Source information
Structure probing data (2A3) for a 207-nucleotide construct. 2A3 adducts were read by reverse transcription with SuperScript II with manganese. The reactions ran in a buffer of 150 mM KOAc, 10 mM MgCl2 and 150 mM bicine (pH 8.5), at 24 C. Source: RMDB library RNAMAK, as collected in RNAgym.
RNA sequence: GGGAACGACUCGAGUAGAGUCGAAAAGGGGUCUCCCACAAGAUGAGGCCUAUACAGGCUUGGAUUUACUGAAGCCUCCACGGUUGUCAGCCUGUAGGCUUGAGUGGGAGACGGAGGCACCCAAACACUUGUUACUCGUUCGCGAGUAACAAGUGAACUUAUUCGUUCCGUUCGCGGAACGAAUAAGAAAAGAAACAACAACAACAAC
Reactivity to 2A3 in 0.01 (KOAc 150mM, MgCl2 10mM, bicine 150mM(pH8.5), 24C), signal-to-noise 1, nucleotides 027 to 156: g040g020g020g010u000c000u000c000c050c000a010c000a000a070g190a190u300g110a060g040g030c030c000u040a140u050a100c010a000g000g040c090u170u300g140g000a190u300u300u290a200c000u010g000a120a010g040c010c000u000c030c000a090c000g040g040u180u210g010u130c030a010g020c030c000u010g000u050a140g040g000c000u150u170g050a030g030u000g000g020g020a000g000a000c010g010g000a040g020g000c000a030c030c000c000a000a060a000c000a000c000u000u000g000u020u000a010c000u000c010g060u070u070c300g030c000g110a010g010u000a000a000c000a000a010g000u000g000a000a000